[RMDB]
Background:
This 170-nucleotide RNA was probed chemically with 2A3 and DMS. The RNA was probed in 150 mM KOAc, 10 mM MgCl2 and 150 mM bicine (pH 8.5) at 24 C. For DMS the reverse transcriptase was MarathonRT.
RNA sequence: GGGAACGACUCGAGUAGAGUCGAAAAACAAAAACUCCUUUACACCUUCUAUGGUAAGGAGUCACUUGAGAACCCAACCUACAUUUACCACUCCGCAUUCAUUGAGUGUGGAAGUUGUGGUAAUGAUACAGCGUGAGGUUCGCCUCACGCAAAAGAAACAACAACAACAAC
Reactivity to 2A3 in 0.01 (KOAc 150mM, MgCl2 10mM, bicine 150mM(pH8.5), 24C), signal-to-noise 9, nucleotides 027 to 129: a000c040a000a030a000a000a000c000u000c000c000u030u080u130a110c070a040c020c000u200u170c140u300a110u300g000g000u020a000a000g000g000a000g000u000c000a040c030u010u020g020a020g030a110a070c020c010c020a010a040c020c020u090a080c010a040u050u050u030a020c010c010a010c010u000c000c000g000c010a010u010u010c020a070u100u300g010a020g000u010g000u010g010g000a020a060g140u160u160g020u000g000g000u010a000a000u010g010a000u040a050c060a040
Reactivity to DMS in 0.01 (KOAc 150mM, MgCl2 10mM, bicine 150mM(pH8.5), 24C), signal-to-noise 4, nucleotides 027 to 129: a100c070a010a000a020a050a010c000u030c030c010u000u010u000a030c220a080c000c000u010u010c170u010a130u030g030g000u020a030a020g000g000a040g020u000c070a060c130u000u000g070a070g040a000a000c010c030c030a130a000c100c040u110a030c040a050u020u050u010a010c000c000a030c010u010c030c000g010c020a020u010u020c040a170u050u120g040a030g050u030g030u000g000g000a050a070g040u000u000g050u000g000g030u010a000a000u000g030a070u060a070c300a060